The record gives the reactivity of an RNA of 207 nucleotides to 2A3.
It was measured as part of the RMDB library RNAMAK.
2A3 adducts were read by reverse transcription with SuperScript II with manganese.
[RMDB]
RNA sequence: GGGAACGACUCGAGUAGAGUCGAAAACUCAGAGCUUCGGCUCUGAGCCACCAACCUUUGUGUAAGCAGCCUAUUGUCAGACGGACCCAUUGGGUCCGAAUCUUGGAUUUAUAGGCGCUUACACUCUGGUCUAUGCGACAGCCUUCGGGCUGUCGAAAGACGAUAACUUCUUCGGAAGUUAUCGUCUAAAAGAAACAACAACAACAAC
Reactivity to 2A3 in 0.01 (KOAc 150mM, MgCl2 10mM, bicine 150mM(pH8.5), 24C), signal-to-noise 2, nucleotides 027 to 156: c000u000c010a000g000a000g000c060u160u180c300g150g000c000u020c010u000g000a000g010c010c020a060c010c010a030a000c000c000u000u030u000g000u000g010u040a000a000g020c080a070g010c020c000u010a010u010u020g020u020c000a010g010a020c010g000g010a000c000c000c130a300u230u300g030g020g000u000c000c000g000a040a040u060c010u100u200g150g020a020u110u300u060a010u050a000g000g000c000g010c000u000u000a000c000a000c000u000c000u010g000g010u000c040u160a130u240g110c020g000a020c000a010g000c000c020u060u150c270g100g000g000c000u000g010u010c000g000a000a000